Structure probing data (2A3 and DMS) for a 177-nucleotide construct. 2A3 adducts were read by reverse transcription with SuperScript II with manganese. The RNA was probed in 150 mM KOAc, 10 mM MgCl2 and 150 mM bicine (pH 8.5) at 24 C.
[RMDB]
RNA sequence: GGGAACGACUCGAGUAGAGUCGAAAACAAUAGUGUCUUUAACAUUUUGCAGGCGACAACUGCUAAUGUCAGUGCACUUAUGGGUGCUAAUGGCAACAAGAUUGUUGACAAAGAAGUUAAAGACAUGCGAGUACAGCAUGUUCGCAUGCUGUACUCGAAAAGAAACAACAACAACAAC
Reactivity to 2A3 in 0.01 (KOAc 150mM, MgCl2 10mM, bicine 150mM(pH8.5), 24C), signal-to-noise 2, nucleotides 027 to 126: c030a010a040u100a160g030u000g000u000c000u040u000u000a010a020c030a240u030u000u010u140g120c100a050g180g000c010g020a000c020a020a000c000u030g020c080u110a090a080u020g000u000c020a010g000u000g060c010a000c000u120u060a130u230g250g000g000u000g000c000u110a300a130u000g000g000c000a020a050c010a080a000g040a040u010u010g030u030u010g010a020c000a000a070a000g040a070a000g020u000u000a000a000a030g000a010c010a000u000g000
Reactivity to DMS in 0.01 (KOAc 150mM, MgCl2 10mM, bicine 150mM(pH8.5), 24C), signal-to-noise 1, nucleotides 027 to 126: c050a100a120u010a160g050u010g010u000c000u020u000u000a000a000c000a230u000u000u000u000g000c200a150g000g020c030g010a030c050a010a050c030u000g030c100u010a090a080u000g010u000c010a060g010u000g000c000a000c000u010u010a120u010g040g000g000u010g000c000u030a010a070u000g020g000c020a020a160c130a040a080g010a130u020u000g010u010u000g000a050c010a030a110a060g000a010a050g000u000u000a000a000a000g000a030c000a010u010g000

It was measured as part of the RMDB library 15KREP.